[RMDB]
RNA sequence: GGGAACGACUCGAGUAGAGUCGAAAACGUGAUGUGUUCGCACAUCACGAAACAUUGAAGCCGGGAAACACGGCAACCGGCAACAAAGCCGAGUAACAAAGAAAACGCCUGACUUCGGUCAGGCGAAUCACGUAAUCCAGUUCGCUGGAUUACGUGAAAAAGAAACAACAACAACAAC
Reactivity to 2A3 in 0.01 (KOAc 150mM, MgCl2 10mM, bicine 150mM(pH8.5), 24C), signal-to-noise 1, nucleotides 027 to 126: c010g000u000g000a000u000g060u020g020u030u050c160g050c040a020c000a030u000c000a000c010g000a000a000a010c030a070u060u270g090a090a050g000c000c020g000g000g030a120a120a060c130a020c070g030g000c020a010a010c020c000g000g070c030a030a030c020a040a170a030g020c030c000g000a000g070u070a010a090c100a090a100a050g150a040a190a020a000c020g000c000c030u000g010a020c010u060u040c260g020g030u020c000a000g000g000c000g010a000a000
Reactivity to DMS in 0.01 (KOAc 150mM, MgCl2 10mM, bicine 150mM(pH8.5), 24C), signal-to-noise 1, nucleotides 027 to 126: c000g010u040g020a010u010g040u000g020u000u010c140g000c000a010c000a000u000c000a000c000g010a080a100a160c090a100u000u000g000a100a300g020c000c000g000g020g050a200a000a140c130a020c070g000g020c110a060a070c010c000g010g000c000a030a120c230a040a040a080g010c030c020g000a070g000u020a120a150c100a000a030a040g020a010a160a090a150c060g000c000c020u000g010a030c010u000u060c140g010g020u000c000a010g000g000c000g030a000a010